[RMDB]
RNA sequence: GGGAACGACUCGAGUAGAGUCGAAAAUCCUUUCUCGAUAGAGAUUGGAGUCAUACAACCCCAGAAACCAUUCCUUAUACCUUGAGUAUUGCUGAAUUGAGUUUAGCGUGCAUGCUCUUGGCUAUUCAUACCAAGGACAACUUCGGUUGUCCUUGAACCUUUACCACAGCUUCGGCUGUGGUAAAGGAAAAGAAACAACAACAACAAC
Reactivity to DMS in 0.01 (KOAc 150mM, MgCl2 10mM, bicine 150mM(pH8.5), 24C), signal-to-noise 1, nucleotides 027 to 156: u000c000c050u000u010u000c000u000c050g050a300u020a110g000a030g000a050u000u000g010g000a060g000u000c150a110u000a190c050a180a130c070c010c000c030a090g000a170a080a100c050c110a220u000u010c020c100u000u000a190u020a030c010c010u010u020g000a020g020u000a010u020u000g060c010u020g000a050a070u000u000g000a140g000u010u000u000a050g030c050g020u000g080c050a150u000g010c050u000c120u010u000g050g000c000u000a100u000u030c050a200u000a200c110c020a000a000g020g020a020c010a010a050c000u000u000c270g040g010u010u000g020u000c000c010u000u000g000a010a080
Reactivity to 2A3 in 0.01 (KOAc 150mM, MgCl2 10mM, bicine 150mM(pH8.5), 24C), signal-to-noise 4, nucleotides 027 to 156: u000c000c000u000u000u010c090u000c000g200a300u200a270g000a000g000a000u010u000g020g000a010g030u070c040a080u090a200c040a050a060c040c000c040c030a020g120a100a070a030c050c020a130u160u200c030c030u090u140a010u040a130c000c030u040u000g000a030g000u020a050u160u160g010c010u030g050a190a230u220u090g070a140g250u090u080u100a020g050c060g060u080g050c010a020u010g000c000u000c010u000u000g010g000c000u030a040u010u110c080a040u100a220c060c000a000a000g000g000a000c000a000a000c020u060u090c170g060g000u020u000g000u000c000c000u000u010g000a000a000